Source information: Structure probing data (DMS and 2A3) for a 177-nucleotide construct. 2A3 adducts were read by reverse transcription with SuperScript II with manganese. 2A3 is a SHAPE reagent: it acylates the 2'-hydroxyl of flexible nucleotides of all four kinds. Source: RMDB library RFMREP, as collected in RNAgym. The reactions ran in a buffer of 150 mM KOAc, 10 mM MgCl2 and 150 mM bicine (pH 8.5), at 24 C.

[RMDB]
RNA sequence: GGGAACGACUCGAGUAGAGUCGAAAAUAACACUGAGGGCCGAUGAUGUGAACCAUGCUCCUACGGUCUAAACCUGUGGGGAGGAUUUCCAAACCAUAUUUCCCAAGAGCUGAGGCCUAUUGAAAAGCUAUAAUUGCAUCUUCGGAUGCAAUUAUAGAAAAGAAACAACAACAACAAC
Reactivity to DMS in 0.01 (KOAc 150mM, MgCl2 10mM, bicine 150mM(pH8.5), 24C), signal-to-noise 3, nucleotides 027 to 126: u010a140a140c120a070c130u010g010a210g040g000g030c020c030g000a070u000g020a160u000g020u020g010a130a120c130c060a060u010g000c010u010c030c020u000a110c110g000g000u000c160u010a120a060a120c100c030u010g050u010g010g020g000g000a250g010g000a290u000u010u000c010c050a060a270a160c040c050a010u020a090u000u000u000c010c010c000a080a080g000a080g000c040u000g000a140g000g010c000c020u000a090u000u000g000a090a080a130a110g000
Reactivity to 2A3 in 0.01 (KOAc 150mM, MgCl2 10mM, bicine 150mM(pH8.5), 24C), signal-to-noise 2, nucleotides 027 to 126: u020a010a000c040a070c100u100g090a180g010g000g060c010c050g070a050u110g040a050u070g160u090g050a010a000c090c030a050u080g080c000u020c010c000u010a000c020g040g000u000c050u150a230a120a040c000c000u060g000u050g040g010g010g010a020g040g040a080u060u100u000c000c000a000a020a030c070c030a030u020a130u130u020u010c000c000c020a010a010g040a020g000c060u040g000a010g030g000c000c000u020a080u050u110g130a060a070a020a000g030